[RMDB]
The record gives the reactivity of an RNA of 207 nucleotides to 2A3. Source: RMDB library VIROID, as collected in RNAgym. The RNA was probed in 150 mM KOAc, 10 mM MgCl2 and 150 mM bicine (pH 8.5) at 24 C.
RNA sequence: GGGAACGACUCGAGUAGAGUCGAAAAUUCUUUAGCACCGGGCUAGGGAGUAAGCCCGUGGAACCUUAGUUUUGUUCCCUCGGGACUUACUUGUGGUUCCUGUGGUGCACUCCUGACCCUGCUGCUAUACAAGAAAAAGAAAUAGUGUUAAUAAGUCCUCCUUUAACUGGUUCGCCAGUUAAAGGAGAAAAGAAACAACAACAACAAC
Reactivity to 2A3 in 0.01 (KOAc 150mM, MgCl2 10mM, bicine 150mM(pH8.5), 24C), signal-to-noise 2, nucleotides 027 to 156: u010u000c000u030u060u010a010g010c000a000c060c040g030g020g000c010u120a070g050g010g000a000g020u060a080a000g000c000c000c000g040u050g000g000a000a000c000c000u010u010a040g010u020u140u100u170g080u170u050c010c000c050u060c080g040g010g020a000c010u030u070a020c000u010u050g070u080g070g000u020u000c000c000u060g240u300g000g020u070g000c050a020c000u000c000c000u020g020a050c000c000c000u000g010c050u010g000c010u040a020u050a080c060a030a030g110a070a110a020a020a030g120a050a130a090u170a150g060u040g020u110u150a130a150u100a300a010g070u030c010